[RMDB]
RNA sequence: GGGAACGACUCGAGUAGAGUCGAAAACGCAGCAAUCGAAUUGUUCGCUGAUCGCGCCCACCUGGUUUAGUUCGCCUUCCGCGUCGUCAGCGCUAAUACCGAGGCGGUGGGCCAGGUCUGCCAGCGACGUACUAUCACCCUUCGGGGUGAUAGUACGAAAAGAAACAACAACAACAAC
Reactivity to DMS in 0.01 (KOAc 150mM, MgCl2 10mM, bicine 150mM(pH8.5), 24C), signal-to-noise 2, nucleotides 027 to 126: c080g000c050a050g000c170a070a080u000c110g000a040a300u000u000g000u010u000c060g010c030u020g000a090u000c050g010c160g000c020c030c040a090c030c000u000g000g020u000u000u000a030g030u010u000c060g030c000c010u000u000c100c140g010c040g000u000c130g010u020c300a180g000c030g000c050u000a090a060u000a110c170c120g000a050g000g030c040g000g020u010g000g000g000c000c030a010g000g000u000c040u010g020c050c030a060g020c020g000a130
Reactivity to 2A3 in 0.01 (KOAc 150mM, MgCl2 10mM, bicine 150mM(pH8.5), 24C), signal-to-noise 2, nucleotides 027 to 126: c070g000c030a040g020c020a020a250u190c100g190a080a150u150u120g020u090u050c030g000c000u030g010a070u170c040g000c000g030c040c000c000a000c010c010u040g000g060u010u020u060a100g050u130u180c050g000c000c000u100u090c100c050g070c020g040u090c030g150u110c090a040g000c000g000c040u030a090a090u060a280c080c060g010a010g060g000c030g020g010u020g000g030g010c010c000a010g020g010u010c040u030g020c030c000a000g000c000g010a000
Structure probing data (DMS and 2A3) for a 177-nucleotide construct.
DMS adducts were read by reverse transcription with MarathonRT.
For 2A3 the reverse transcriptase was SuperScript II with manganese.
It was measured as part of the RMDB library OK2TRN.
The reactions ran in a buffer of 150 mM KOAc, 10 mM MgCl2 and 150 mM bicine (pH 8.5), at 24 C.
The 2A3 profile rests on 2,455 reads.